[RMDB]
RNA sequence: GGGAACGACUCGAGUAGAGUCGAAAACGGAUGCCCAGGUCGGACCGCGAGGAGGUGGAGAUCCCAUGCCGACCCGAAGAGGAAAGGAGGACACGGACGACAAACCGUAAGUUCUACUGCCCUUUAUUACCACGAAUGUUCGCAUUCGUGAAAAGAAACAACAACAACAAC
Reactivity to DMS in 0.01 (KOAc 150mM, MgCl2 10mM, bicine 150mM(pH8.5), 24C), signal-to-noise 9, nucleotides 027 to 129: c120g000g000a060u050g020c050c030c020a130g000g030u000c050g010g020a100c040c040g000c070g010a090g010g010a060g010g040u000g000g000a070g000a070u040c060c010c030a090u020g030c040c050g020a040c040c040c060g030a070a050g020a040g020g010a020a090a020g000g010a040g010g000a020c050a010c040g000g000a040c060g000a070c200a060a100a070c050c030g010u010a070a080g020u000u050c030u000a080c050u030g000c130c010c010u010u010u020a080u050u040a140c160
Reactivity to 2A3 in 0.01 (KOAc 150mM, MgCl2 10mM, bicine 150mM(pH8.5), 24C), signal-to-noise 9, nucleotides 027 to 129: c050g070g030a060u130g030c010c010c010a020g020g070u040c020g020g040a080c020c020g030c040g040a070g020g010a020g000g020u060g010g010a090g010a040u050c010c010c010a020u090g020c010c010g030a040c000c020c010g050a040a030g030a030g020g000a050a040a010g020g010a010g010g000a000c020a010c030g030g040a020c030g030a030c110a040a100a020c010c000g040u070a070a050g020u040u020c020u040a120c030u050g030c000c000c000u060u130u070a190u110u150a110c040